[RMDB]
Structure probing data (DMS and 2A3) for a 177-nucleotide construct.
The 2A3 profile rests on 1,247 reads.
The DMS profile rests on 694 reads.
RNA sequence: GGGAACGACUCGAGUAGAGUCGAAAAAGCCAAUCCUUCGGGAUUGGCUACAGCAACGAAGCAAAGCAACGAGACAAGACGAGCAAAUGAUCGAGCAUGCUACACACCCCAUCUUCGGAUGGGGUAACUUGGUUAGUAGCUUCGGCUACUAACCAAGAAAAGAAACAACAACAACAAC
Reactivity to DMS in 0.01 (KOAc 150mM, MgCl2 10mM, bicine 150mM(pH8.5), 24C), signal-to-noise 1, nucleotides 027 to 126: a130g000c000c010a030a000u000c000c000u000u000c200g030g010g000a000u000u000g010g010c000u000a000c030a040g020c040a060a090c110g000a160a030g000c010a110a150a050g010c030a010a030c070g050a030g010a060c040a050a040g020a040c040g000a030g000c040a030a070a050u020g010a080u000c080g010a110g020c050a030u010g000c080u000a100c150a060c150a030c000c000c000c000a000u000c000u000u030c180g000g000a030u000g000g000g000g010u000a010a020
Reactivity to 2A3 in 0.01 (KOAc 150mM, MgCl2 10mM, bicine 150mM(pH8.5), 24C), signal-to-noise 1, nucleotides 027 to 126: a000g000c010c000a000a010u000c010c000u020u070c300g050g000g000a000u000u000g010g050c010u000a010c020a000g030c010a060a090c090g090a080a010g080c020a140a000a010g000c000a050a100c070g020a020g050a140c060a120a000g040a070c080g030a010g060c010a070a070a140u170g010a060u020c000g010a000g030c010a030u070g000c040u120a040c060a000c000a000c020c020c000c040a000u010c000u050u040c220g060g000a020u020g000g000g000g000u000a000a000